[RMDB]
RNA sequence: GGGAACGACUCGAGUAGAGUCGAAAAUCAUUCUUCAAUAGUGUCGAGUCCUUAUUCGACGAGUUCGGCGUAUGCGAAGUCCAUUCGCAGACCGUUCUCACGGGAGUACUCUUUCACUCGUUCAUGGAGGUCGCUUCCACGUUCGAUGGGGAUGUCAUCCUUAAUUCGUUUUCGAACGAAUUAAGGAAAAAGAAACAACAACAACAAC
Reactivity to 2A3 in 0.01 (KOAc 150mM, MgCl2 10mM, bicine 150mM(pH8.5), 24C), signal-to-noise 7, nucleotides 027 to 156: u120c030a060u090u030c030u170u110c070a130a190u160a160g090u080g080u130c070g020a040g030u000c020c000u050u050a090u210u100c020g010a030c010g000a020g000u000u000c020g020g000c110g110u200a110u080g000c000g000a000a010g110u160c150c060a250u030u000c000g000c020a040g020a110c000c000g000u010u000c000u000c010a010c010g020g000g000a010g020u020a070c020u000c000u050u080u110c040a070c070u080c050g110u180u110c080a080u100g020g010a020g020g060u180c110g010c050u010u000c000c000a030c110g020u040u020c000g020a010u030g000g000g030g040a020u060g090u060c020a040
Reactivity to DMS in 0.01 (KOAc 150mM, MgCl2 10mM, bicine 150mM(pH8.5), 24C), signal-to-noise 3, nucleotides 027 to 156: u000c050a130u040u000c040u010u020c050a080a130u010a070g020u000g000u000c060g020a300g010u010c080c020u010u000a080u000u000c010g010a120c100g000a070g010u000u000c000g040g050c040g080u010a160u000g030c020g010a020a080g000u010c170c150a170u000u000c010g020c000a060g000a030c010c010g020u000u010c010u000c010a170c120g000g020g020a040g000u000a030c010u000c020u000u010u010c000a070c020u000c140g030u000u000c120a070u000g010g010a050g020g000u000c070g010c040u000u000c000c020a180c170g020u000u000c020g010a060u010g010g020g020g020a130u000g010u000c030a150